[RMDB]
RNA sequence: GGGAACGACUCGAGUAGAGUCGAAAAUGGUGCAACUCUUAUUAGUAACUAAUCCAAAGCAAGUAUAGGAGAACAGGUUUUUUACUAUUUUUAGGCAGAUAAAAAAUAGUAUUUGACAGUCUAACACAAAAGGCAUUGCCGUUCGCGGCAAUGCCAAGUUAUCAUCAAGCUUCGGCUUGAUGAUAACAAAAGAAACAACAACAACAAC
Reactivity to 2A3 in 0.01 (KOAc 150mM, MgCl2 10mM, bicine 150mM(pH8.5), 24C), signal-to-noise 1, nucleotides 027 to 156: u080g000g000u060g000c020a020a030c020u000c010u030u130a060u120u140a110g020u100a080a090c050u040a060a170u140c130c080a060a030a030g020c030a020a100g040u100a020u090a090g010g040a030g010a050a040c060a070g050g010u140u000u000u000u010u000a000c000u010a000u000u000u000u000u000a010g020g000c040a040g040a120u120a040a070a000a000a000a000u010a000g010u000a040u060u040u030g010a010c010a000g010u040c000u120a180a000c060a010c000a100a100a030a040g010g000c000a000u010u010g010c000c000g030u040u040c210g020c000g000g040c010a000a000u000g020c000c010a000a000
Chemical mapping of a 207-nucleotide RNA with 2A3. The reactions ran in a buffer of 150 mM KOAc, 10 mM MgCl2 and 150 mM bicine (pH 8.5), at 24 C. Reactivities are rounded to 0.1 and cut off at 0 and 3. 2A3 adducts were read by reverse transcription with SuperScript II with manganese. For 2A3, 769 sequencing reads were counted.